[RMDB]
RNA sequence: GGGAACGACUCGAGUAGAGUCGAAAAAGAGCGGUGUAAAGGUCUGAGGCUGAGAAGUCUCAGCAGCGGUCAUCGUUGAAUUAUUACUGGUUUAAGAAUACCGCUGAACUUAGACUAGUAGUUGAUAGAUAGAGUUUGUAUUCGUACAGGCUCUAUCAAAAGAAACAACAACAACAAC
Reactivity to 2A3 in 0.01 (KOAc 150mM, MgCl2 10mM, bicine 150mM(pH8.5), 24C), signal-to-noise 8, nucleotides 027 to 126: a000g120a000g010c030g020g010u040g030u090a100a120a010g050g030u040c010u010g000a000g000g000c000u000g010a020g020a100a020g010u000c000u000c010a000g000c000a000g010c000g030g050u050c020a020u020c020g030u060u120g070a120a070u180u070a060u070u050a070c020u030g010g010u010u010u000a010a010g040a060a040u040a120c000c040g000c060u040g020a040a010c000u010u010a000g000a010c000u010a010g020u000a030g020u020u070g050a110u100a210
Reactivity to DMS in 0.01 (KOAc 150mM, MgCl2 10mM, bicine 150mM(pH8.5), 24C), signal-to-noise 7, nucleotides 027 to 126: a080g000a050g020c010g000g010u010g010u020a070a090a090g010g000u020c000u000g000a010g000g020c000u000g010a200g000a170a020g020u010c000u000c010a000g010c040a090g010c050g000g000u020c060a040u010c050g010u000u000g000a080a080u020u030a060u030u000a020c020u000g000g000u000u000u000a000a010g000a120a110u020a070c020c030g000c010u000g000a090a130c000u000u010a000g000a000c000u000a010g010u000a030g000u010u010g010a110u020a120